[RMDB]
RNA sequence: GGGAACGACUCGAGUAGAGUCGAAAAGGUGGAGCCAUGGGAUGCUCCUCCCGAUGUCCGAAUCCAUCCCUCCCCCCGAGGGUCGCCCAGGAAUGGCGGGACCCCACUCAACUGGGGUCCGCGUUCCGUAGUCUUGUACGUUCGCGUACAAGACUACAAAAGAAACAACAACAACAAC
Reactivity to DMS in 0.01 (KOAc 150mM, MgCl2 10mM, bicine 150mM(pH8.5), 24C), signal-to-noise 1, nucleotides 027 to 126: g010g020u000g020g000a030g000c070c090a060u010g050g030g000a300u000g000c020u010c020c000u000c040c000c010g010a120u010g000u010c020c030g010a100a100u010c080c040a010u000c030c010c010u000c000c000c030c010c010c030g020a080g000g000g000u000c000g000c020c000c010a180g010g010a020a000u000g010g030c030g050g000g000a030c010c000c000c030a020c020u000c300a100a070c180u020g010g000g000g000u000c000c010g010c000g000u010u000c000c020